Conditions: 150 mM KOAc, 10 mM MgCl2 and 150 mM bicine (pH 8.5), 24 C. Chemical mapping of a 207-nucleotide RNA with 2A3 and DMS. High DMS reactivity at an A or C suggests that its Watson-Crick edge is free.

[RMDB]
RNA sequence: GGGAACGACUCGAGUAGAGUCGAAAAUGACGUUAAACUGCUGACUCAUACAUACUGACACCGGUUGCUCAACAGGCUGUGUGGGAAAAUAGAAUAACAAGGCUGUCAAUUUGAGCUUGACGGCUGCAAAACCUGCAGUACUUCGGUACUGCAGGAACCUGAUCAAUAGGUUCGCCUAUUGAUCAGGAAAAGAAACAACAACAACAAC
Reactivity to 2A3 in 0.01 (KOAc 150mM, MgCl2 10mM, bicine 150mM(pH8.5), 24C), signal-to-noise 4, nucleotides 027 to 156: u100g050a020c080g010u060u080a080a080a030c040u080g020c030u050g070a040c020u000c010a000u020a030c010a010u090a070c040u090g050a030c030a040c100c050g070g020u050u080g030c040u020c040a020a100c010a050g040g000c040u020g000u000g010u040g020g010g010a050a000a010a030u110a030g090a060a030u050a060a030c060a080a060g030g000c000u000g020u000c000a000a000u050u040u170g030a010g020c020u010u010g000a000c000g010g000c000u020g010c000a020a030a030a140c000c000u000g000c000a000g000u000a000c000u020u030c100g100g000u000a000c000u000g000c000a000g000g000a000a000
Reactivity to DMS in 0.01 (KOAc 150mM, MgCl2 10mM, bicine 150mM(pH8.5), 24C), signal-to-noise 1, nucleotides 027 to 156: u000g000a070c090g010u000u000a010a020a170c030u000g030c060u000g010a300c020u030c010a060u000a030c060a070u000a130c040u010g000a130c050a150c010c040g000g010u010u000g030c020u020c060a050a120c030a020g000g020c020u000g000u010g030u010g030g000g010a030a090a040a150u000a100g000a090a180u000a010a040c000a090a200g000g010c000u000g000u000c010a040a000u000u000u020g000a080g010c300u000u000g050a010c000g040g010c030u000g060c040a050a020a080a140c000c000u010g000c000a020g020u000a000c010u000u000c280g020g010u000a000c010u000g020c010a000g010g000a030a030
It was measured as part of the RMDB library M2RFPK.